[RMDB]
RNA sequence: GGGAACGACUCGAGUAGAGUCGAAAAGGAUACCCAUGUCAGUAGUGAUGGCCGCCACCCUGGCCGGAGUCAUGGUCGAGCUAUAACUAAGCCCGGUGUCGAUGGAGGCCAUCUCGUGAUGCACCUCAAAGGUUACCGCGUCCACCCUGGCCUCCCGUCAAAUCGAUGAGUUCGCUCAUCGAUUUGAAAAAGAAACAACAACAACAAC
Reactivity to 2A3 in 0.01 (KOAc 150mM, MgCl2 10mM, bicine 150mM(pH8.5), 24C), signal-to-noise 1, nucleotides 027 to 156: g070g010a070u160a180c000c000c000a020u120g060u070c040a040g020u050a060g040u080g100a050u080g000g000c000c000g040c000c000a060c030c060c070u100g100g000c010c000g010g000a080g010u020c010a060u100g000g090u150c120g080a040g010c050u050a050u040a250a020c040u010a030a030g020c000c000c000g040g000u120g020u070c070g040a080u020g000g000a040g030g000c000c000a000u020c000u010c000g030u030g030a000u070g010c030a040c000c010u120c170a140a120a010g080g000u110u070a060c000c120g000c000g010u010c010c020a030c020c000c020u030g000g000c000c000u060c000c010c010g010

Overview
Structure probing data (2A3) for a 207-nucleotide construct. For 2A3 the reverse transcriptase was SuperScript II with manganese.